[RMDB]
Source: RMDB library OK1LIB, as collected in RNAgym. The record gives the reactivity of an RNA of 177 nucleotides to 2A3 and DMS. For 2A3 the reverse transcriptase was SuperScript II with manganese. The reactions ran in a buffer of 150 mM KOAc, 10 mM MgCl2 and 150 mM bicine (pH 8.5), at 24 C. The DMS profile rests on 11,028 reads.
RNA sequence: GGGAACGACUCGAGUAGAGUCGAAAAAGGACGCCGAGAGCCUUUAAAAGCUCUUUUUCAUACUACCAGCUGGGUUGCAAGGCACCUUUACUCCUCACGUGGCGUCCGCUGCCCAGUGUCACAAGCCAUCGUCAUCAGUAUUCGUACUGAUGACGAUAAAAGAAACAACAACAACAAC
Reactivity to 2A3 in 0.01 (KOAc 150mM, MgCl2 10mM, bicine 150mM(pH8.5), 24C), signal-to-noise 7, nucleotides 027 to 126: a000g000g000a000c010g000c010c010g030a020g000a000g010c030c020u100u220u110a070a130a010a010g010c000u010c000u020u030u000u050u050c100a130u140a130c030u060a080c050c030a020g010c020u040g010g020g020u040u040g060c040a090a110g060g000c030a090c010c000u040u070u060a130c080u070c020c000u050c030a070c100g100u100g000g000c000g000u010c010c010g000c020u030g000c000c000c000a010g010u030g090u110c060a060c040a160a030g020c050c030
Reactivity to DMS in 0.01 (KOAc 150mM, MgCl2 10mM, bicine 150mM(pH8.5), 24C), signal-to-noise 6, nucleotides 027 to 126: a060g010g000a010c010g020c000c010g020a010g010a010g010c000c000u000u020u080a110a140a060a250g000c000u000c000u000u000u020u020u040c140a100u020a100c090u020a170c080c080a160g010c030u000g010g010g000u010u010g000c080a010a040g000g010c060a090c110c030u000u000u020a070c080u010c000c020u020c080a090c120g010u010g010g010c010g000u000c010c000g000c070u010g010c010c010c000a060g000u010g000u020c130a090c170a080a090g010c190c100